[RMDB]
RNA sequence: GGGAACGACUCGAGUAGAGUCGAAAAGCGUACUACUACGUAACGUGAGGGAAACUUGGAUUUACACGUCUCUAGCGUGUCCCAAAUAGGAUCGGGCGUGUUGUCAGUUUCCCUCUACGUAGUAUCGCAAAGGCCUGUUGGUUCGCCAACAGGCCAAGGAAUCACUUAGGUUCGCCUAAGUGAUUCCAAAAGAAACAACAACAACAAC
Reactivity to 2A3 in 0.01 (KOAc 150mM, MgCl2 10mM, bicine 150mM(pH8.5), 24C), signal-to-noise 3, nucleotides 027 to 156: g000c000g090u080a070c020u030a000c010u010a000c010g020u040a230a040c170g260u160g010a040g000g010g000a010a030a000c020u060u120g110g000a030u190u300u230a010c020a000c020g040u020c010u030c090u180a060g110c060g090u290g070u090c000c000c020a230a220a060u300a030g020g000a020u020c040g000g000g000c000g000u000g000u010u030g000u000c000a000g000u010u010u000c000c010c000u000c000u000a000c010g000u000a000g000u010a000u180c010g000c020a080a000a050g020g000c000c000u090g010u000u000g050g000u030u050c300g040c090c000a000a000c000a000g000g000c000c000a000a010

The record gives the reactivity of an RNA of 207 nucleotides to 2A3. Conditions: 150 mM KOAc, 10 mM MgCl2 and 150 mM bicine (pH 8.5), 24 C. It was measured as part of the RMDB library RNAMAK. 2A3 adducts were read by reverse transcription with SuperScript II with manganese.